[RMDB]
RNA sequence: GGGAACGACUCGAGUAGAGUCGAAAACUUCGGUUUGAUCCGGUGAAGCCAGAUAGUUAAUCAGAUCGUUGUAUACGCUAUCGUAAAUAGUGCGUCCGGUCGGGCAGGUGUGCUCAAAUGCAUCCAGGAAAAAUGAAGCAUUCGUGCUUCAUUUUUCAAAAGAAACAACAACAACAAC
Reactivity to 2A3 in 0.01 (KOAc 150mM, MgCl2 10mM, bicine 150mM(pH8.5), 24C), signal-to-noise 2, nucleotides 027 to 126: c010u080u060c070g040g040u030u050u100g050a050u020c010c020g000g060u060g100a080a010g000c020c020a020g030a070u050a050g060u110u120a070a060u080c040a040g030a120u070c020g110u130u100g080u090a090u020a080c000g000c030u010a030u050c040g050u120a070a130a050u100a060g070u080g070c020g040u000c010c010g000g020u010c000g000g020g000c030a010g000g040u060g010u040g040c020u020c100a110a050a030u140g000c010a020u000c020c030a020g040
Reactivity to DMS in 0.01 (KOAc 150mM, MgCl2 10mM, bicine 150mM(pH8.5), 24C), signal-to-noise 4, nucleotides 027 to 126: c020u010u010c050g020g000u000u000u000g000a060u000c020c030g000g010u010g000a080a100g000c010c010a110g000a060u000a050g010u000u000a140a120u010c070a100g000a070u010c120g000u020u010g010u000a080u000a080c180g010c030u000a020u010c080g010u010a060a060a110u000a050g010u000g010c040g000u000c020c020g010g020u000c050g000g010g000c040a030g000g010u000g000u010g010c020u000c040a050a080a090u010g020c040a040u000c020c040a190g000